This 177-nucleotide RNA was probed chemically with 2A3 and DMS. For 2A3 the reverse transcriptase was SuperScript II with manganese.
RNA sequence: GGGAACGACUCGAGUAGAGUCGAAAAGAUAUGGAGUUUCUACGGGAGCUCAGCAUCGGAAACGAUGUGGGAGCGAGGAUCGUAGGAAACUCCUAAGUCAAAACACUAAUCCUUCGGGAUUAGUGAACGCUAAGUAGACGUUCGCGUCUACUUAGCGAAAAGAAACAACAACAACAAC
Reactivity to 2A3 in 0.01 (KOAc 150mM, MgCl2 10mM, bicine 150mM(pH8.5), 24C), signal-to-noise 1, nucleotides 027 to 126: g040a010u020a020u120g000g000a000g000u010u000u050c010u020a010c000g080g000g040a220g000c010u010c030a000g010c000a000u010c000g000g000a070a000a000c030g010a010u000g080u100g150g300g000a000g000c060g000a090g000g090a130u080c040g010u020a130g000g150a030a050a010c030u000c000c000u000a050a000g010u000c020a020a000a160a130c010a000c040u010a000a000u050c030c040u040u160c300g120g020g000a010u000u000a000g000u000g000a160a070
Reactivity to DMS in 0.01 (KOAc 150mM, MgCl2 10mM, bicine 150mM(pH8.5), 24C), signal-to-noise 1, nucleotides 027 to 126: g000a040u000a250u000g010g000a020g010u000u010u000c000u000a010c010g000g000g080a080g020c000u000c030a300g000c000a000u000c000g030g000a080a100a150c000g010a010u000g000u000g000g060g020a010g010c000g000a100g050g010a070u000c000g000u000a020g040g020a000a000a020c000u000c000c000u000a000a010g020u000c030a090a090a130a240c010a010c010u000a000a000u000c000c010u010u050c240g080g010g000a010u020u010a000g000u000g000a010a050
The 2A3 profile rests on 1,730 reads. It was measured as part of the RMDB library TTRDES. Reactivities are given for positions 27 through 126.